[RMDB]
RNA sequence: GGGAACGACUCGAGUAGAGUCGAAAAGCACGUCCGGGAAGACCCGUGCGAACACUUGAGCUCCGGCUUGACCGCUCUUGUGGAUUAGGACGUUCUAGCUCCGGCUUGGCCGCUAGUUCGUCCGAAAGGAGGUAAUACGGUUCGCCGUAUUACCUCCAAAAGAAACAACAACAACAAC
Reactivity to 2A3 in 0.01 (KOAc 150mM, MgCl2 10mM, bicine 150mM(pH8.5), 24C), signal-to-noise 8, nucleotides 027 to 126: g050c020a000c020g030u050c060c020g010g020g040a100a070g140a190c000c000c000g010u020g020c000g020a060a010c010a000c020u010u040g010a000g020c030u070c120c060g080g010c070u220u200g080a270c020c000g000c000u000c000u010u020g030u020g010g040a060u070u150a040g000g000a000c000g000u000u000c000u000a010g000c030u050c090c040g160g000c120u140u230g120g020c030c010g000c000u010a000g000u000u000c000g000u000c000c000g000a020a000a000
Reactivity to DMS in 0.01 (KOAc 150mM, MgCl2 10mM, bicine 150mM(pH8.5), 24C), signal-to-noise 4, nucleotides 027 to 126: g040c050a070c000g000u030c060c090g000g010g030a150a100g000a130c040c060c020g030u040g000c040g000a180a150c020a040c000u000u000g000a030g000c070u030c160c050g010g000c090u080u010g000a090c070c050g030c000u000c030u010u000g000u000g000g000a140u010u020a060g000g000a000c000g010u000u000c000u010a000g000c040u020c060c040g000g000c090u040u010g020g000c090c110g000c010u000a000g010u000u000c020g010u000c000c000g000a010a070a130
Chemical mapping of a 177-nucleotide RNA with 2A3 and DMS. The reactions ran in a buffer of 150 mM KOAc, 10 mM MgCl2 and 150 mM bicine (pH 8.5), at 24 C. The DMS profile rests on 7,789 reads. Values cover nucleotides 27 to 126.